[RMDB]
RNA sequence: GGGAACGACUCGAGUAGAGUCGAAAACGUCCAUCACGUCCACUUAUGGCAAGUCGGUGACCAACGGCUGAUGACACUGCAUGUACAGGUGAUCCCACCGCAAGACAAUGAUGAAUUACUGCAACGAGUUCUCCGAUAUAUUCGUAUAUCGGAGAACAAAAGAAACAACAACAACAAC
Reactivity to DMS in 0.01 (KOAc 150mM, MgCl2 10mM, bicine 150mM(pH8.5), 24C), signal-to-noise 5, nucleotides 027 to 126: c130g000u000c050c030a070u010c070a100c090g010u010c040c020a080c080u010u000a100u010g020g000c090a040a060g000u000c050g000g010u000g000a090c070c080a080a090c060g000g010c070u010g010a090u010g000a100c080a060c050u000g010c020a060u010g010u000a080c090a050g020g010u010g010a130u000c050c020c000a170c070c090g000c060a050a070g000a080c100a040a050u000g010a090u010g010a100a050u000u000a080c060u000g020c060a050a070c150g020a150
Reactivity to 2A3 in 0.01 (KOAc 150mM, MgCl2 10mM, bicine 150mM(pH8.5), 24C), signal-to-noise 5, nucleotides 027 to 126: c010g050u000c020c000a030u060c020a010c040g080u050c020c010a050c040u120u080a100u210g040g000c020a040a030g040u060c030g030g070u030g050a110c020c020a040a030c040g040g000c040u050g030a110u050g010a020c000a010c060u030g010c020a050u060g030u070a040c020a060g000g010u010g040a080u030c000c020c010a030c010c040g020c030a030a040g030a050c040a060a080u100g050a060u080g050a060a100u100u040a060c040u010g050c020a060a030c060g080a020
Structure probing data (DMS and 2A3) for a 177-nucleotide construct.
Source: RMDB library OK2TRN, as collected in RNAgym.
Values cover nucleotides 27 to 126.
The RNA was probed in 150 mM KOAc, 10 mM MgCl2 and 150 mM bicine (pH 8.5) at 24 C.
For DMS the reverse transcriptase was MarathonRT.